[RMDB]
RNA sequence: GGGAACGACUCGAGUAGAGUCGAAAACUAUGCAAGUUUCCUCUUCUUAGAUUUGACCUCCUAUUCUGGACUAUGAAGAUGGAGACUCCAUAGAGAGAAAUUGAAGUAACUGAGAAAACAACACAUUGCCAGUUGCUGUGUUCUAAACUAGACUCUAUCCUGAUAUUAGGUUCGCCUAAUAUCAGGAAAAAGAAACAACAACAACAAC
Reactivity to 2A3 in 0.01 (KOAc 150mM, MgCl2 10mM, bicine 150mM(pH8.5), 24C), signal-to-noise 2, nucleotides 027 to 156: c000u000a010u020g010c020a030a070g000u010u000u000c010c020u030c020u030u010c010u010u070a070g040a190u210u110u280g150a190c030c050u110c010c030u130a230u300u200c200u180g000g020a010c000u010a020u040g000a010a000g010a010u250g000g000a010g010a000c000u030c010c000a010u000a020g050a000g000a000g020a010a120a080u120u220g040a070a060g000u000a010a000c010u050g000a000g110a270a080a060a020c110a110a000c050a010c040a160u100u240g090c000c000a020g010u000u030g000c030u020g030u000g010u070u040c070u090a120a130a110c020u040a040g030a080c010u000c000u000a040
Reactivity to DMS in 0.01 (KOAc 150mM, MgCl2 10mM, bicine 150mM(pH8.5), 24C), signal-to-noise 2, nucleotides 027 to 156: c030u000a020u010g010c090a050a090g000u000u000u000c000c000u000c010u010u000c000u000u000a030g010a260u000u010u010g010a190c060c010u000c010c050u000a290u000u010c040u000g000g030a300c030u000a020u000g020a040a030g030a060u000g040g010a090g020a060c000u000c110c020a030u010a030g000a200g000a130g010a050a090a110u000u020g010a080a130g020u000a040a060c060u000g000a160g000a170a040a060a100c000a060a110c040a030c050a070u000u000g010c100c040a080g000u000u000g030c010u000g000u030g000u000u000c040u020a050a040a080c150u000a180g000a110c020u000c040u010a250
Chemical mapping of a 207-nucleotide RNA with 2A3 and DMS. The DMS profile rests on 3,414 reads.